[RMDB]
RNA sequence: GGGAACGACUCGAGUAGAGUCGAAAAGUCCCGAGUUCGCUCGGGACAAAAAAGCGUACUACUGUGGAGAACCAGAACUACCAGACGUCCCAAAUAGGACGUACUGGCUGGUUCGUUGAAACAGUAUCGCAAAAAGAGCGUCGUUCGCGACGCUCAACCUAGGUCACAACUUCGGUUGUGACCUAGGAAAAGAAACAACAACAACAAC
Reactivity to 2A3 in 0.01 (KOAc 150mM, MgCl2 10mM, bicine 150mM(pH8.5), 24C), signal-to-noise 1, nucleotides 027 to 156: g000u000c010c010c010g000a000g010u150u110c210g050c120u030c020g000g050g020a030c080a000a000a000a000a000a000g020c020g050u120a050c030u000a000c000u020g040u020g010g060a020g000a030a000c030c000a010g020a240a170c110u130a020c190c010a000g000a000c000g050u070c000c010c060a140a300a060u300a040g000g030a010c030g000u200a300c010u000g000g000c000u000g000g070u010u000c000g000u000u040g020a030a030a000c000a010g000u000a020u250c000g000c000a000a150a000a000a000g000a000g000c000g030u020c020g020u150u150c300g000c000g210a000c000g000c000u070c000a000a000
The data come from the RNA Mapping Database (RMDB), library RNAMAK. Structure probing data (2A3) for a 207-nucleotide construct. The RNA was probed in 150 mM KOAc, 10 mM MgCl2 and 150 mM bicine (pH 8.5) at 24 C. Reactivities are given for positions 27 through 156.